[RMDB]
RNA sequence: GGGAACGACUCGAGUAGAGUCGAAAAUGAAAUAUUAUCUCAAAAAUGUGGGUGCUCAAGAAGACUGUGUUGAUGAACACUUUCAAGAGAAAAUCUUAUCUUCAAUUCAGGGCAAUGAAUUUUUACACAUUUCUUGUGAUUUCGAUCACAAGAAAUGAAAAGAAACAACAACAACAAC
Reactivity to 2A3 in 0.01 (KOAc 150mM, MgCl2 10mM, bicine 150mM(pH8.5), 24C), signal-to-noise 5, nucleotides 027 to 126: u100g020a040a100a040u260a110u270u110a170u010c020u010c040a120a160a070a030a020u190g030u100g080g030g030u060g030c000u010c050a080a070g040a030a000g040a080c140u060g030u000g030u100u060g100a250u190g100a090a010c000a000c000u040u130u100c120a090a010g040a010g000a110a120a020a060u020c000u040u060a010u050c010u020u030c010a020a130u020u070c080a070g040g050g040c030a060a000u060g030a050a020u050u030u050u060u190a080c090a010
Reactivity to DMS in 0.01 (KOAc 150mM, MgCl2 10mM, bicine 150mM(pH8.5), 24C), signal-to-noise 3, nucleotides 027 to 126: u010g000a140a080a110u010a050u050u010a130u020c010u010c000a060a050a120a070a070u040g020u010g010g020g000u000g000c020u010c020a100a130g010a070a040g000a050c150u010g000u000g010u010u000g000a110u060g030a060a020c050a020c020u010u030u010c120a010a050g020a030g000a080a060a060a110u010c020u010u020a080u010c030u010u000c000a060a070u020u000c120a090g000g000g030c050a040a070u030g030a030a050u000u010u000u020u020a090c210a150